Notes:
Conditions: 150 mM KOAc, 10 mM MgCl2 and 150 mM bicine (pH 8.5), 24 C. Structure probing data (DMS and 2A3) for a 177-nucleotide construct. For DMS, 1,933 sequencing reads were counted. Reactivities are given for positions 27 through 126. It was measured as part of the RMDB library TTRINS. DMS adducts were read by reverse transcription with MarathonRT.
RNA sequence: GGGAACGACUCGAGUAGAGUCGAAAAGAUAUGGAGUACUUAAAGGGAGCGAAUUCGAAACUAUUAACUCGGAAACGAGUUAACGAAUUUCGAAUGUUCGCGAAGAACUUUAAGUACUCCUAAGUCAGGAUAUAGAUGGGUUCGCCCAUCUAUAUCCAAAAGAAACAACAACAACAAC
Reactivity to DMS in 0.01 (KOAc 150mM, MgCl2 10mM, bicine 150mM(pH8.5), 24C), signal-to-noise 2, nucleotides 027 to 126: g010a060u000a290u020g000g000a030g010u000a000c000u000u000a010a020a010g020g000g000a190g040c010g020a020a040u000u000c000g000a010a000a010c070u000a300u000u010a000a010c000u010c000g020g000a020a060a150c000g000a010g030u010u000a010a020c030g000a030a080u000u010u000c000g010a020a020u000g010u010u000c010g000c010g000a090a200g030a100a100c010u010u000u000a000a020g010u000a000c000u000c000c000u000a000a040g010u000c040a170
Reactivity to 2A3 in 0.01 (KOAc 150mM, MgCl2 10mM, bicine 150mM(pH8.5), 24C), signal-to-noise 2, nucleotides 027 to 126: g040a030u040a010u140g000g020a020g010u010a000c000u020u000a000a020a000g020g050g030a300g090c000g010a000a000u010u000c000g020a010a000a010c010u020a010u040u020a020a010c010u020c000g020g050a010a040a030c010g000a000g000u020u010a000a000c030g110a300a300u030u010u000c000g000a020a010u130g080u050u070c000g000c000g050a080a100g010a010a000c000u060u000u000a000a000g000u000a000c000u000c000c000u000a000a010g020u020c040a020